[RMDB]
RNA sequence: GGGAACGACUCGAGUAGAGUCGAAAACACGAACAAGUGAGCCAAUUUCUCGAUUAUCUGGUUGGGGAGGUUCCCCAAGACGUUCACUUCUACAUCUUGUUCACUAUUUUCAUUGGAAAAGCUAACUCAAUGACUAAAUUCGGGAAUAUGCCUCAAGCGAGAUGACUAAUUUCGAUUAGUCAUCUCGAAAAGAAACAACAACAACAAC
Reactivity to 2A3 in 0.01 (KOAc 150mM, MgCl2 10mM, bicine 150mM(pH8.5), 24C), signal-to-noise 8, nucleotides 027 to 156: c070a020c050g060a070a010c040a090a060g050u030g070a020g020c030c020a060a080u040u060u010c050u020c020g050a050u090u080a130u240c090u120g120g020u060u030g010g010g020g000a060g030g100u120u160c000c010c000c010a010a010g040a020c050g050u100u070c040a050c060u110u070c040u130a080c020a110u030c010u060u050g040u050u070c030a030c080u070a160u070u120u030u050c040a060u030u070g050g020a060a110a040a070g030c070u060a040a070c010u030c080a010a040u040g030a050c020u100a060a080a130u100u040c010g000g000g030a030a020u130a050u160g030c010c030u060c030a050a030g150
Reactivity to DMS in 0.01 (KOAc 150mM, MgCl2 10mM, bicine 150mM(pH8.5), 24C), signal-to-noise 2, nucleotides 027 to 156: c060a090c060g010a100a080c030a050a120g030u010g000a080g000c040c050a060a210u000u000u000c020u000c010g030a140u010u010a090u010c100u000g020g000u000u010g000g000g010g040a140g020g030u010u000c020c010c020c010a020a020g010a030c060g010u000u010c040a080c110u000u010c020u010a100c040a040u000c050u010u000g000u000u010c060a080c070u000a130u020u000u000u010c060a190u010u010g030g000a020a050a070a110g000c030u000a040a210c020u010c020a050a050u000g000a050c120u000a010a030a120u000u000c030g000g000g010a060a060u000a080u010g010c060c020u000c030a060a200g010